Description:
The record gives the reactivity of an RNA of 177 nucleotides to 2A3 and DMS. The 2A3 profile rests on 1,402 reads. The data come from the RNA Mapping Database (RMDB), libraries RFM100 and RFMREP. 2A3 adducts were read by reverse transcription with SuperScript II with manganese. For DMS the reverse transcriptase was MarathonRT.
[RMDB]
RNA sequence: GGGAACGACUCGAGUAGAGUCGAAAAUCCGCCCGGUUGCCCGCCUCGGCGAUCACGUCACCGGGCUCGAACUCCUCCUGGCGGAACCGGUCGGCCAGCGCGGUGAGCGCGUCCUCGUCGUCGAAUCUUAUAUAAGCCUCUUCGGAGGCUUAUAUAAAAAAGAAACAACAACAACAAC
Reactivity to 2A3 in 0.01 (KOAc 150mM, MgCl2 10mM, bicine 150mM(pH8.5), 24C), signal-to-noise 2, nucleotides 027 to 126: u020c020c010g020c000c000c000g020g000u060u120g030c000c010c040g010c020c000u070c060g060g030c030g020a060u140c060a020c100g060u020c010a000c020c030g030g020g020c000u000c020g010a040a010c040u030c000c010u010c000c060u050g010g010c000g020g000a030a040c000c010g010g040u020c000g020g000c030c000a040g000c020g000c030g010g110u110g100a070g010c030g000c000g020u040c010c010u020c010g090u000c020g000u010c010g020a030a100u040c040
Reactivity to DMS in 0.01 (KOAc 150mM, MgCl2 10mM, bicine 150mM(pH8.5), 24C), signal-to-noise 4, nucleotides 027 to 126: u020c020c050g010c070c000c010g000g000u000u010g000c110c060c010g010c050c020u010c170g000g010c060g010a080u020c130a090c120g000u000c020a060c060c040g000g000g020c030u000c030g000a100a090c130u010c020c020u000c030c050u010g000g020c020g010g000a080a060c040c040g010g000u000c010g010g030c090c070a090g000c010g000c010g000g020u030g000a180g000c030g020c050g000u010c030c010u010c050g010u000c070g000u020c020g000a100a140u020c050